About this RNA
Source: RMDB library RFMREP, as collected in RNAgym. This 177-nucleotide RNA was probed chemically with DMS and 2A3. The reactions ran in a buffer of 150 mM KOAc, 10 mM MgCl2 and 150 mM bicine (pH 8.5), at 24 C.
[RMDB]
RNA sequence: GGGAACGACUCGAGUAGAGUCGAAAAAUAAGCUCUAUGAUGUUAUUUUACAUAUGUUAGACUAAUGAAAUGAUUUGAUUGUAAUUUAGUAACUGAGCUUAUAAACUACUCAGGUUCGCCUGAGUAGCGUAUGUAAUUACUUCGGUAAUUACAUACGAAAAGAAACAACAACAACAAC
Reactivity to DMS in 0.01 (KOAc 150mM, MgCl2 10mM, bicine 150mM(pH8.5), 24C), signal-to-noise 7, nucleotides 027 to 126: a020u000a010a010g010c000u000c000u000a240u010g010a100u000g000u000u000a020u000u000u000u000a010c010a030u010a080u010g000u000u000a050g010a100c090u000a090a110u010g010a120a080a090u000g000a070u000u000u000g010a080u000u000g010u000a020a020u000u000u000a020g010u000a030a060c070u000g000a010g010c010u000u000a000u000a060a070a270c000u000a000c000u000c000a010g010g010u010u010c260g020c000c010u000g000a020g000u000a000g010
Reactivity to 2A3 in 0.01 (KOAc 150mM, MgCl2 10mM, bicine 150mM(pH8.5), 24C), signal-to-noise 9, nucleotides 027 to 126: a000u010a000a000g000c010u000c020u020a080u130g110a120u040g070u030u010a030u030u050u020u020a010c010a010u110a030u170g050u060u070a060g040a080c060u100a120a120u220g110a150a110a100u110g050a120u070u120u140g050a060u050u040g010u010a010a020u020u030u030a020g010u010a020a000c020u010g000a000g000c000u010u000a010u020a010a010a000c000u000a000c000u000c000a000g020g040u030u050c160g050c040c000u010g000a000g010u000a000g010